[RMDB]
RNA sequence: GGGAACGACUCGAGUAGAGUCGAAAACUGACAUUGCCUAUGUGUCUGUGAAGAGCACAUCCAAGUAGGCUACGCUUGCGUUCCCGUCUGAGAACGUAAGAAGAGAUGAACAGACUAGCUCUCGGAAGGCCCGCCCGCAGGCAAGAAGAUGAGUGAACGCUAUAUCACCCUUCGGGGUGAUAUAGCGAAAAGAAACAACAACAACAAC
Reactivity to 2A3 in 0.01 (KOAc 150mM, MgCl2 10mM, bicine 150mM(pH8.5), 24C), signal-to-noise 1, nucleotides 027 to 156: c020u010g010a010c000a030u050u070g000c000c000u000a010u020g010u010g010u020c050u080g070u050g120a170a190g110a080g130c080a030c010a150u000c040c050a170a020g040u000a000g010g000c000u020a010c000g000c010u000u000g000c000g000u000u010c030c010c010g000u000c000u010g020a010g000a000a000c010g000u000a000a000g010a000a000g010a020g040a060u270g050a120a020c010a000g020a010c010u000a000g000c000u000c000u000c000g040g000a020a020g020g000c000c020c000g110c010c100c070g120c160a060g000g010c010a000a000g010a020a000g020a020u190g000a000g020u020g010a070a000

Chemical mapping of a 207-nucleotide RNA with 2A3.
It was measured as part of the RMDB library RSTRND.
Reactivities are rounded to 0.1 and cut off at 0 and 3.
For 2A3, 1,436 sequencing reads were counted.